Record summary:
The record gives the reactivity of an RNA of 170 nucleotides to DMS and 2A3. For 2A3, 27,940 sequencing reads were counted. Reactivities are given for positions 27 through 129.
[RMDB]
RNA sequence: GGGAACGACUCGAGUAGAGUCGAAAAGGAAUGGCGGGACCCCACUCGACAGGGUCCGCGUACCAUCCUUUCUUACCUGAUGGCCGGCAUGGUCCCAGCCUCCUCGCUGGCGCCGGCUGGGCAACAUUGACCACAGACUUCGGUCUGUGGAAAAGAAACAACAACAACAAC
Reactivity to DMS in 0.01 (KOAc 150mM, MgCl2 10mM, bicine 150mM(pH8.5), 24C), signal-to-noise 6, nucleotides 027 to 129: g030g020a040a020u000g030g000c040g020g010g020a020c020c010c030c080a170c170u070c210g030a130c200a160g000g000g000u040c000c000g030c030g010u030a040c000c000a000u000c010c020u000u000u000c140u020u030a110c000c020u020g000a040u070g010g000c000c040g010g000c000a060u060g010g010u000c300c000c010a000g000c010c100u040c120c070u060c200g030c010u030g000g000c190g000c060c050g020g020c000u000g000g020g050c030a020a070c090a110u080u060g050a190
Reactivity to 2A3 in 0.01 (KOAc 150mM, MgCl2 10mM, bicine 150mM(pH8.5), 24C), signal-to-noise 9, nucleotides 027 to 129: g030g020a200a090u010g010g010c010g010g010g000a020c000c020c020c000a100c110u210c070g130a070c090a070g010g000g010u000c000c000g080c010g020u030a060c000c000a010u000c000c000u020u010u010c060u070u110a110c000c020u040g070a090u120g090g040c010c000g020g000c060a130u180g040g010u120c000c050c000a010g010c000c040u180c030c040u090c100g000c000u030g010g000c010g000c010c000g030g010c000u010g000g000g010c020a080a040c030a160u020u180g040a040
The reactions ran in a buffer of 150 mM KOAc, 10 mM MgCl2 and 150 mM bicine (pH 8.5), at 24 C.